[RMDB]
An RNA of 207 nucleotides, treated with DMS and 2A3 and read out base by base.
Reactivities are given for positions 27 through 156.
Conditions: 150 mM KOAc, 10 mM MgCl2 and 150 mM bicine (pH 8.5), 24 C.
DMS adducts were read by reverse transcription with MarathonRT.
The data come from the RNA Mapping Database (RMDB), library RNAMAK.
RNA sequence: GGGAACGACUCGAGUAGAGUCGAAAAACGAGAUUCGUCUCGUAAAAUGAUAUGGAAUUCUCCCCACCGUGAAUGUAUCGAAGAACAAUGCUCGGAAACGAGCAUUGGGAGAUACAUCACGAGGAAUUCCUAAGUCCGCAAGGGUGUUCGCACCCAAGAAAAUAAAUACUUUCGAGUAUUUAUUUUCAAAAGAAACAACAACAACAAC
Reactivity to DMS in 0.01 (KOAc 150mM, MgCl2 10mM, bicine 150mM(pH8.5), 24C), signal-to-noise 1, nucleotides 027 to 156: a050c010g000a020g010a130u000u000c250g070u000c010u000c030g000u010a080a040a090a090u010g030a100u010a120u000g000g020a060a030u000u000c010u000c270c190c000c000a300c250c010g000u010g010a070a100u010g020u000a000u020c000g000a060a260g030a180a220c000a000a000u000g000c000u000c000g010g010a070a090a130c100g000a020g000c000a010u000u010g000g000g010a150g000a000u000a020c010a000u000c010a010c000g000a150g000g020a060a050u000u000c000c010u010a090a140g010u000c070c180g000c120a100a220g010g000g000u000g000u010u000c050g100c010a040c010c010c010a010a130
Reactivity to 2A3 in 0.01 (KOAc 150mM, MgCl2 10mM, bicine 150mM(pH8.5), 24C), signal-to-noise 4, nucleotides 027 to 156: a000c010g000a010g010a020u090u120c210g050u010c090u000c000g010u020a040a120a030a110u200g020a040u050a090u200g000g010a000a010u010u000c020u090c020c020c030c000a020c020c000g000u010g040a260a110u010g020u010a000u020c040g070a300a010g000a070a010c000a000a000u000g000c000u000c000g020g000a050a060a050c020g010a000g000c010a000u000u000g010g000g010a030g000a000u000a010c010a000u000c000a000c000g000a020g000g000a000a000u000u000c000c000u010a120a040g070u070c120c100g070c230a140a240g020g000g010u020g010u040u110c160g050c030a000c000c000c010a010a030